Background:
Chemical mapping of a 177-nucleotide RNA with 2A3 and DMS.
RNA sequence: GGGAACGACUCGAGUAGAGUCGAAAAGCAACGAGCGUAAUCGCGUCUUGACUAGGGAGACUGUAGGUGACGUGAGUAUCUAUCCCAGUGUGCAUAGCGCACAAUACGCUGAUCUUCAGUCAAUUAACUGUGAGUAGGUUUUCGAACCUACUCACAGAAAAGAAACAACAACAACAAC
Reactivity to 2A3 in 0.01 (KOAc 150mM, MgCl2 10mM, bicine 150mM(pH8.5), 24C), signal-to-noise 4, nucleotides 027 to 126: g060c040a020a040c040g030a010g010c000g010u050a000a050u020c020g010c010g060u020c010u050u110g080a180c080u070a100g130g200g000a050g000a010c020u150g020u100a060g050g010u020g010a010c010g020u020g020a020g000u050a070u040c040u020a050u020c010c010c030a030g020u020g000u030g000c060a140u150a240g040c040g020c010a000c010a000a040u170a070c080g000c010u010g030a080u020c060u090u100c050a040g000u020c010a070a220u130u100a180a100
Reactivity to DMS in 0.01 (KOAc 150mM, MgCl2 10mM, bicine 150mM(pH8.5), 24C), signal-to-noise 2, nucleotides 027 to 126: g020c110a100a040c040g010a160g020c040g030u010a050a060u000c050g000c090g000u000c010u000u000g000a240c110u040a130g000g000g010a060g000a060c040u030g020u000a030g000g000u000g020a030c010g030u000g000a140g000u020a070u000c070u000a200u000c000c020c000a100g010u010g010u010g010c000a180u000a110g010c150g030c000a010c030a020a070u010a070c170g000c010u000g000a080u010c100u000u010c010a060g000u000c100a030a060u000u000a020a170

Values are in units of 0.01, from 0 to 300, in steps of 10.
The 2A3 profile rests on 3,171 reads.
DMS adducts were read by reverse transcription with MarathonRT.
The RNA was probed in 150 mM KOAc, 10 mM MgCl2 and 150 mM bicine (pH 8.5) at 24 C.